An RNA of 207 nucleotides, treated with 2A3 and DMS and read out base by base. For DMS the reverse transcriptase was MarathonRT. It was measured as part of the RMDB library OK3TST. For 2A3 the reverse transcriptase was SuperScript II with manganese. For 2A3, 1,198 sequencing reads were counted. For DMS, 1,822 sequencing reads were counted.
RNA sequence: GGGAACGACUCGAGUAGAGUCGAAAAACGGACACGCCGCGAGCCAGAUUCUCGUACAGCCACUUGUGCAGAGUGAUCCAGUCCACAUCACGAGAAAACGUGUCCGAGGCAAUGAAAUAAUCAUAUUUGGGAAGCUCGACGAAGCCCAUGGACGACAUCGAAGCCUAUAUUUCGAUAUAGGCUUCGAAAAAGAAACAACAACAACAAC
Reactivity to 2A3 in 0.01 (KOAc 150mM, MgCl2 10mM, bicine 150mM(pH8.5), 24C), signal-to-noise 2, nucleotides 027 to 156: a000c000g000g030a000c000a000c010g070c020c040g000c060g040a000g030c010c020a080g010a120u130u020c010u010c020g010u050a050c010a020g030c040c020a170c080u130u070g010u030g070c050a040g040a010g100u040g000a000u000c050c020a040g070u010c010c000a030c000a040u030c030a000c050g050a050g030a020a100a000a000c010g000u000g000u000c000c000g000a020g010g080c020a070a070u080g030a140a020a110u120a070a030u110c030a070u110a160u130u110u050g060g000g020a120a020g020c020u010c060g070a110c030g010a060a000g060c040c030c010a000u070g020g010a020c050g000a020c050a000
Reactivity to DMS in 0.01 (KOAc 150mM, MgCl2 10mM, bicine 150mM(pH8.5), 24C), signal-to-noise 2, nucleotides 027 to 156: a090c020g010g000a070c000a020c000g070c040c070g050c020g000a080g080c040c070a180g010a150u000u000c030u010c030g090u000a160c100a130g000c040c120a050c030u000u010g050u020g060c090a180g000a200g010u000g000a100u000c030c040a290g020u000c010c010a020c030a190u000c010a100c010g010a100g000a040a040a120a040c040g000u000g030u000c020c010g000a070g010g030c040a090a130u030g000a050a130a080u010a110a130u000c070a100u010a180u010u000u010g000g000g010a160a160g040c040u000c010g040a090c000g000a130a120g020c000c030c020a080u000g000g000a130c010g000a070c060a210